[RMDB]
The record gives the reactivity of an RNA of 177 nucleotides to DMS and 2A3. DMS (dimethyl sulfate) methylates the pairing face of unpaired adenines and cytosines. Conditions: 150 mM KOAc, 10 mM MgCl2 and 150 mM bicine (pH 8.5), 24 C. Values cover nucleotides 27 to 126.

RNA sequence: GGGAACGACUCGAGUAGAGUCGAAAAUACAAUAGCGUAGGGAACCAAGCUAAGAGGUUGGAAGUCCAACGGUAGAGGGCUUGGUUCGCAGCUGCUCUUGAAGAGGUCCCACUCCCUACGCCGCAAAUGUACAUAUGUCUUUCGAGACAUAUGUACAAAAAGAAACAACAACAACAAC
Reactivity to DMS in 0.01 (KOAc 150mM, MgCl2 10mM, bicine 150mM(pH8.5), 24C), signal-to-noise 7, nucleotides 027 to 126: u010a110c140a070a100u000a070g010c010g020u000a060g020g010g010a030a040c000c000a010a010g010c010u010a100a120g010a140g020g010u000u000g010g000a300a190g010u010c000c000a010a020c020g020g020u010a100g010a130g020g010g010c010u000u000g000g000u000u000c040g010c060a100g010c100u010g010c050u000c040u010u010g010a080a070g000a060g010g000u010c000c000c000a210c070u000c030c010c000u000a010c030g020c010c140g000c170a050a050a090
Reactivity to 2A3 in 0.01 (KOAc 150mM, MgCl2 10mM, bicine 150mM(pH8.5), 24C), signal-to-noise 5, nucleotides 027 to 126: u210a020c060a050a100u070a150g010c000g010u020a010g020g000g020a000a010c000c000a010a010g000c010u060a090a030g060a070g250g090u030u010g040g050a290a130g140u160c010c000a000a000c020g050g070u150a090g030a100g110g100g000c010u010u000g000g000u010u010c010g000c000a000g020c020u100g020c020u040c020u100u120g110a140a040g020a020g040g020u030c030c000c000a020c020u000c000c000c000u000a010c010g000c000c040g080c060a090a120a080